Conditions: 150 mM KOAc, 10 mM MgCl2 and 150 mM bicine (pH 8.5), 24 C. An RNA of 207 nucleotides, treated with 2A3 and DMS and read out base by base. Values cover nucleotides 27 to 156. For 2A3 the reverse transcriptase was SuperScript II with manganese. The data come from the RNA Mapping Database (RMDB), library OK3TST.

RNA sequence: GGGAACGACUCGAGUAGAGUCGAAAACUUUAGAGUGCUGACACUAGAAAGAUCCUUCUCCAAAUGCUUUUGUGAAUUAUGACAUUCUGCUUAAGAUUCCGGUUACAAGGAGAAGACUGUUACCUUAGCUUACUCACAUGCUUGCUUCUUAGGUGGAACCCAUUUAUGGAUUCGUCCAUAAAUGGGUAAAAGAAACAACAACAACAAC
Reactivity to 2A3 in 0.01 (KOAc 150mM, MgCl2 10mM, bicine 150mM(pH8.5), 24C), signal-to-noise 7, nucleotides 027 to 156: c010u070u100u110a050g020a020g040u060g040c110u110g110a060c020a020c080u030a040g080a040a080a010g030a050u060c030c000u050u050c040u010c030c000a060a100a120u130g070c060u080u100u110u120g070u050g040a060a080u160u070a120u270g050a030c030a050u040u050c050u070g050c010u030u030a040a020g010a040u070u030c050c040g040g000u110u090a060c060a140a090g040g010a000g000a020a010g040a040c020u030g070u110u110a100c010c020u030u070a010g030c010u020u050a120c010u020c040a040c000a050u090g020c020u040u020g010c010u040u060c000u030u090a030g050g010u110g100g040a010
Reactivity to DMS in 0.01 (KOAc 150mM, MgCl2 10mM, bicine 150mM(pH8.5), 24C), signal-to-noise 2, nucleotides 027 to 156: c060u000u000u000a070g000a090g060u000g000c030u000g020a130c030a210c040u000a080g010a070a110a080g000a090u000c020c020u000u000c010u000c030c020a060a150a100u000g000c040u000u000u010u000g060u000g030a060a070u010u000a090u000g010a080c050a150u000u000c080u000g030c020u000u000a070a150g020a070u000u010c020c000g000g020u000u000a060c090a090a260g000g020a070g040a050a110g020a060c040u000g020u000u000a050c030c030u000u010a040g040c030u000u010a130c080u000c000a060c110a140u000g020c000u000u000g020c010u000u000c030u010u010a080g030g030u000g000g010a140